[RMDB]
RNA sequence: GGGAACGACUCGAGUAGAGUCGAAAAUGAUCUUCAUCCACCGCUUCUUCCAGGACAUCGCCACCCGCUUCGACCAGCCCGGCCUGCCCGACUUCCUGCGCCGCGACGCGGUGGUGGCGAAAUAUCAUAAUUUAAAUCCUUUCGAGGAUUUAAAUUAAAAAGAAACAACAACAACAAC
Reactivity to 2A3 in 0.01 (KOAc 150mM, MgCl2 10mM, bicine 150mM(pH8.5), 24C), signal-to-noise 2, nucleotides 027 to 126: u040g020a020u030c030u070u040c060a060u050c010c000a020c010c030g020c040u050u040c000u030u000c050c020a050g050g030a030c020a130u020c050g000c000c000a030c010c010c000g000c030u020u010c010g070a060c010c040a000g030c000c020c000g020g010c020c020u010g030c040c010c000g050a080c000u100u070c020c010u040g040c030g010c050c010g070c010g030a020c050g000c020g010g000u050g060g000u000g000g000c010g040a010a060a000u160a020u060c050a030
Reactivity to DMS in 0.01 (KOAc 150mM, MgCl2 10mM, bicine 150mM(pH8.5), 24C), signal-to-noise 5, nucleotides 027 to 126: u010g020a070u000c040u000u000c040a080u010c020c020a070c050c050g010c040u010u000c050u000u000c040c030a100g010g000a110c150a100u000c030g010c010c020a030c020c010c020g010c030u000u000c030g010a110c080c060a100g000c050c100c030g000g010c030c050u000g010c020c020c020g000a070c110u000u010c050c010u000g010c090g030c020c060g010c050g020a050c070g000c020g010g010u000g010g030u000g000g010c040g010a020a050a060u010a070u000c040a130